Conditions: 150 mM KOAc, 10 mM MgCl2 and 150 mM bicine (pH 8.5), 24 C.
This 207-nucleotide RNA was probed chemically with DMS and 2A3.
RNA sequence: GGGAACGACUCGAGUAGAGUCGAAAAGGAACUUCGGUUCCGUAAGCUCCUAAGUCGAGAUGGAGGUCUAUUAAUCCAAUGAUGGUAUCGGAAACGAUACUUGAGGAUUAGCAGACCGAUGAAAUCUCGAUAUGGAUAAGAGAACGUUCGCGUUCAACAAAUGAAUUUCCUUCGGGAAAUUCAUUUGAAAAGAAACAACAACAACAAC
Reactivity to DMS in 0.01 (KOAc 150mM, MgCl2 10mM, bicine 150mM(pH8.5), 24C), signal-to-noise 2, nucleotides 027 to 156: g000g000a000a020c000u000u000c290g080g000u000u000c020c010g020u000a030a170g020c070u000c000c020u000a110a300g010u000c020g010a030g020a020u000g010g010a150g020g010u000c000u010a040u010u000a010a010u000c000c000a130a170u010g020a150u000g000g030u000a000u000c010g030g030a250a140a300c010g000a030u000a000c000u010u000g010a040g010g010a010u000u000a010g000c020a020g000a040c000c000g090a070u010g010a070a070a050u000c000u000c010g010a000u000a090u010g020g020a190u000a080a120g000a130g020a060a060c030g000u020u000c150g020c080g020u000u000c020a150a300
Reactivity to 2A3 in 0.01 (KOAc 150mM, MgCl2 10mM, bicine 150mM(pH8.5), 24C), signal-to-noise 2, nucleotides 027 to 156: g020g000a000a000c020u080u090c230g090g000u010u020c000c000g000u020a060a030g080c060u010c000c000u030a120a030g030u000c000g000a000g000a000u020g050g000a000g010g010u010c010u010a030u030u010a010a000u010c000c010a050a300u130g030a040u110g030g020u000a010u000c000g010g080a080a040a060c020g000a000u000a010c000u010u000g010a010g000g000a000u010u000a020g000c030a000g020a020c000c000g000a000u020g010a000a020a000u000c000u000c000g010a010u000a020u050g010g000a010u050a220a090g080a020g010a040a010c030g020u110u160c250g050c050g130u030u060c050a080a070
It was measured as part of the RMDB library RNAMAK.